Structure probing data (2A3) for a 207-nucleotide construct.

[RMDB]
RNA sequence: GGGAACGACUCGAGUAGAGUCGAAAAGAAAGAAAGAAAGAACUCUGUAAAGUGAGGGAUUGCCUGGACCAGGUCGGCGGGCCUGCUCCAGUUUCCUUCGCUCUGUUCAACGGGCAGACCGCCACAAAAAACGCGUGGCUGUUCGCAGCCACGCGAACUAGACAAACUAGUUCGCUAGUUUGUCUAGAAAAGAAACAACAACAACAAC
Reactivity to 2A3 in 0.01 (KOAc 150mM, MgCl2 10mM, bicine 150mM(pH8.5), 24C), signal-to-noise 2, nucleotides 027 to 156: g050a010a100a020g070a090a130a000g040a010a100a030g020a030a020c020u060c110u220g060u290a160a130a070g000u020g000a010g020g010g000a020u040u130g050c000c010u000g000g000a010c020c000a000g020g000u010c040g060g080c010g030g030g000c000c000u000g000c020u000c020c010a000g000u010u010u020c000c010u040u020c000g000c000u030c020u010g030u070u050c040a070a020c040g000g010g000c040a040g030a120c020c040g040c010c020a030c090a030a220a020a010a020a010c030g000c000g010u010g000g040c010u000g000u050u100c200g000c160a000g010c000c000a000c010g000c000g000a000a010
Background
2A3 adducts were read by reverse transcription with SuperScript II with manganese. For 2A3, 1,382 sequencing reads were counted.